Chemical mapping of a 177-nucleotide RNA with 2A3 and DMS. For 2A3, 1,259 sequencing reads were counted. For DMS the reverse transcriptase was MarathonRT. For DMS, 1,924 sequencing reads were counted. For 2A3 the reverse transcriptase was SuperScript II with manganese.

[RMDB]
RNA sequence: GGGAACGACUCGAGUAGAGUCGAAAAUUUAGCAUUGGCAAGCACAGAACUCAGAAGGAAUUGAUCUAACAUAAGGAAACAUUCAGAGAAAGAUUUGUGCAUUAUGAUCCUGUUCUGACCAUUUUCAAUACCAGAAAGUGUUCGCACUUUCUGGUAUAAAAGAAACAACAACAACAAC
Reactivity to 2A3 in 0.01 (KOAc 150mM, MgCl2 10mM, bicine 150mM(pH8.5), 24C), signal-to-noise 2, nucleotides 027 to 126: u070u070u060a030g020c010a020u030u000g070g000c020a010a060g010c000a000c020a020g030a090a010c010u050c080a040g070a050a000g090g020a010a060u040u060g050a090u040c020u040a030a090c020a200u240a140a160g060g000a040a050a000c020a020u070u060c020a040g030a000g040a220a060a000g010a010u020u080u080g020u000g000c000a010u070u010a070u150g010a020u040c000c000u010g020u090u000c010u030g110a120c000c000a030u070u050u000u020c040a040
Reactivity to DMS in 0.01 (KOAc 150mM, MgCl2 10mM, bicine 150mM(pH8.5), 24C), signal-to-noise 3, nucleotides 027 to 126: u010u000u010a110g000c040a070u000u000g010g010c100a110a140g000c020a020c050a070g010a050a120c020u000c050a050g000a150a140g010g030a050a070u000u000g040a280u000c020u010a100a100c120a060u010a100a100g020g000a030a050a130c110a020u000u000c010a010g010a090g000a090a060a040g010a090u010u000u000g000u000g020c030a110u000u000a040u010g000a080u000c020c000u000g000u020u020c060u010g000a140c090c060a100u000u010u000u000c120a100